An RNA of 177 nucleotides, treated with 2A3 and read out base by base. The 2A3 profile rests on 569 reads. The reactions ran in a buffer of 150 mM KOAc, 10 mM MgCl2 and 150 mM bicine (pH 8.5), at 24 C.
RNA sequence: GGGAACGACUCGAGUAGAGUCGAAAAAGCCUAGGAGCCGUACGCGGCUCCUAGGCAUCUCUACUUUAACAUGGAGGCACUUGCUGUGCCAUGAUAAAAAUAAGUGCUUCCAUGUUUGAGUGUGGAAGGGAAUGCCUUAUUUCGAUAAGGCAUUCCCAAAAGAAACAACAACAACAAC
Reactivity to 2A3 in 0.01 (KOAc 150mM, MgCl2 10mM, bicine 150mM(pH8.5), 24C), signal-to-noise 1, nucleotides 027 to 126: a010g010c000c000u010a000g010g030a000g000c000c000g000u010a010c200g010c040g090g000c000u040c000c010u000a000g000g000c000a000u000c000u000c000u000a000c020u000u000u000a000a000c000a000u000g040g010a030g000g000c010a000c030u060u020g070c080u070g170u210g230c100c010a080u060g060a030u130a000a120a000a060a060u220a060a020g000u000g000c000u010u040c000c040a000u000g000u000u000u000g000a000g000u000g000u170g170g090a180a200
Background
Reactivities are rounded to 0.1 and cut off at 0 and 3. Reactivities are given for positions 27 through 126.